[RMDB]
RNA sequence: GGGAACGACUCGAGUAGAGUCGAAAAGGCUGGAGUCUAGUCAGCUUAUUGAUGAUAGAUAGAGAAUCUCAAAUCAGGAACACAAGAACCAAAGUACUAGCUCAAGGAGACAACCAGGUUUUAUGUCGUUAUAUGCACACUUCGGUGUGCAUAUAACAAAAGAAACAACAACAACAAC
Reactivity to DMS in 0.01 (KOAc 150mM, MgCl2 10mM, bicine 150mM(pH8.5), 24C), signal-to-noise 2, nucleotides 027 to 126: g010g010c020u000g000g000a080g000u010c080u000a070g010u000c100a080g000c050u000u010a060u010u000g010a050u000g000a240u000a020g000a050u000a100g010a090g020a130a090u000c000u000c110a030a140a070u000c040a060g010g000a080a070c070a090c130a060a080g000a050a080c070c040a060a060a100g000u000a040c050u000a060g010c060u010c050a070a090g000g010a110g000a100c060a080a080c010c070a130g040g010u020u000u040u000a060u020g010u000c140
Reactivity to 2A3 in 0.01 (KOAc 150mM, MgCl2 10mM, bicine 150mM(pH8.5), 24C), signal-to-noise 1, nucleotides 027 to 126: g050g000c010u050g030g050a000g010u080c040u030a040g070u040c010a000g000c020u100u050a100u090u100g010a030u040g020a040u040a160g050a020u000a040g260a040g040a150a040u020c030u030c030a020a050a040u100c020a010g050g070a050a070c080a020c010a110a050g080a060a050c020c010a040a040a020g020u020a040c010u010a030g000c030u020c050a030a030g100g010a050g030a020c050a030a030c030c000a010g000g070u020u000u070u120a100u150g120u080c000
This 177-nucleotide RNA was probed chemically with DMS and 2A3. DMS (dimethyl sulfate) methylates the pairing face of unpaired adenines and cytosines. It was measured as part of the RMDB library OK2TRN. For 2A3, 1,222 sequencing reads were counted. For 2A3 the reverse transcriptase was SuperScript II with manganese.